Source: RMDB library M2PK50, as collected in RNAgym. This 177-nucleotide RNA was probed chemically with 2A3 and DMS. The reactions ran in a buffer of 150 mM KOAc, 10 mM MgCl2 and 150 mM bicine (pH 8.5), at 24 C. As a SHAPE reagent, 2A3 marks flexible, mostly unpaired nucleotides at the ribose 2'-OH. 2A3 adducts were read by reverse transcription with SuperScript II with manganese. For DMS, 5,244 sequencing reads were counted.
[RMDB]
RNA sequence: GGGAACGACUCGAGUAGAGUCGAAAAACACCGAUCUUCGGAUCGGUGUAAAUAAAUUCAGCGGUUAAAAUUUCGAGCGCAUAACCGCUGAUGCGCUCGAAAAAACAGUUAGGUUCGCCUAACUGAAUCAUAAUUACAUCUUCGGAUGUAAUUAUGAAAAAGAAACAACAACAACAAC
Reactivity to 2A3 in 0.01 (KOAc 150mM, MgCl2 10mM, bicine 150mM(pH8.5), 24C), signal-to-noise 4, nucleotides 027 to 126: a000c010a000c010c000g000a010u000c010u040u070c180g070g020a000u010c010g000g000u000g000u010a000a000a000u020a000a010a010u080u040c020a010g010c020g130g110u140u180a090a140a120a210u250u170u100c030g000a010g010c000g000c010a010u040a070a070c010c010g010c020u000g000a000u030g000c000g000c010u000c010g000a010a000a000a000a010a030c000a000g000u000u000a010g010g040u020u050c240g060c020c000u000a000a000c000u000g020a000a020
Reactivity to DMS in 0.01 (KOAc 150mM, MgCl2 10mM, bicine 150mM(pH8.5), 24C), signal-to-noise 4, nucleotides 027 to 126: a130c010a010c010c000g010a000u000c000u000u010c170g020g000a000u000c010g000g020u000g010u000a010a030a060u000a040a060a070u020u000c030a030g000c030g010g000u000u000a050a060a110a130u000u000u000c030g000a020g020c000g000c010a040u000a060a140c050c020g000c040u000g010a010u010g000c000g000c000u000c000g010a000a020a040a070a060a110c010a000g010u000u000a010g000g020u000u010c200g030c000c000u000a000a010c000u000g010a070a080